[RMDB]
RNA sequence: GGGAACGACUCGAGUAGAGUCGAAAAUGUCCAUUUCGAUGGACAGUUGGAGCGUACUACGUCGGGAGGAGGCCACUCCCCACCCUUCUCCCAAAUAGGAGAAGGAGGUGGACUCCGACGAUCGACGUAUCGCGGAUAAGGCGCGUUCGCGCGCCAAUCGUUAUCUAACGUUCGCGUUAGAUAACGAAAAAGAAACAACAACAACAAC
Reactivity to DMS in 0.01 (KOAc 150mM, MgCl2 10mM, bicine 150mM(pH8.5), 24C), signal-to-noise 2, nucleotides 027 to 156: u000g040u000c000c000a020u000u000u000c260g020a040u000g000g000a020c000a100g000u010u000g010g000a190g090c000g030u010a120c140u000a000c010g010u000c010g000g000g020a120g020g010a030g000g000c010c010a020c020u010c070c010c000c060a250c200c000c010u000u000c000u000c010c000c070a020a100a140u020a040g020g000a070g030a070a000g000g000a080g000g020u000g010g000a050c000u000c000c010g020a080c150g030a050u000c020g010a030c010g080u000a020u000c010g010c030g020g010a140u000a090a190g030g010c000g030c050g000u000u000c150g010c030g010c000g010c000c000a010a110
Reactivity to 2A3 in 0.01 (KOAc 150mM, MgCl2 10mM, bicine 150mM(pH8.5), 24C), signal-to-noise 2, nucleotides 027 to 156: u090g000u020c000c000a010u050u170u070c260g160a060u010g000g000a010c000a030g030u020u120g050g030a110g000c020g010u040a070c080u000a000c010g000u000c000g000g000g010a020g000g000a000g010g020c000c010a010c010u070c000c020c010c000a030c000c010c000u000u010c010u010c040c030c030a050a070a010u140a030g000g000a000g000a010a000g000g000a000g010g000u000g000g000a000c000u000c000c000g060a110c000g020a050u030c000g040a010c000g030u010a030u300c010g000c000g000g000a080u070a120a170g000g000c010g020c000g030u080u120c190g040c010g000c000g020c100c000a000a040